Description: This 177-nucleotide RNA was probed chemically with 2A3. The data come from the RNA Mapping Database (RMDB), library OK1LIB. For 2A3 the reverse transcriptase was SuperScript II with manganese. Conditions: 150 mM KOAc, 10 mM MgCl2 and 150 mM bicine (pH 8.5), 24 C.

[RMDB]
RNA sequence: GGGAACGACUCGAGUAGAGUCGAAAACGCGAUAAUUCACUCAGCUGCUUCCUGUGACUCUUUCCUGUGACUCUCGAUGCAGCUGCCGUACAGCCAGAGCCGCUCGCAGAAGACAUGGAAAACGGUGCGCCUAGGGUGCGUUCGCGCACCCUAGGCGAAAAGAAACAACAACAACAAC
Reactivity to 2A3 in 0.01 (KOAc 150mM, MgCl2 10mM, bicine 150mM(pH8.5), 24C), signal-to-noise 1, nucleotides 027 to 126: c000g000c080g020a040u120a120a080u080u190c040a010c070u040c010a070g000c060u040g000c010u000u050c000c030u080g040u070g120a100c050u150c020u070u020u080c000c030u060g050u140g030a110c000u000c000u000c070g020a060u150g040c050a000g010c020u000g000c000c000g080u160a100c000a040g000c000c000a020g020a000g120c010c000g050c000u020c020g000c020a030g030a090a000g080a020c040a090u220g000g070a000a000a120a000c020g030g000u070g030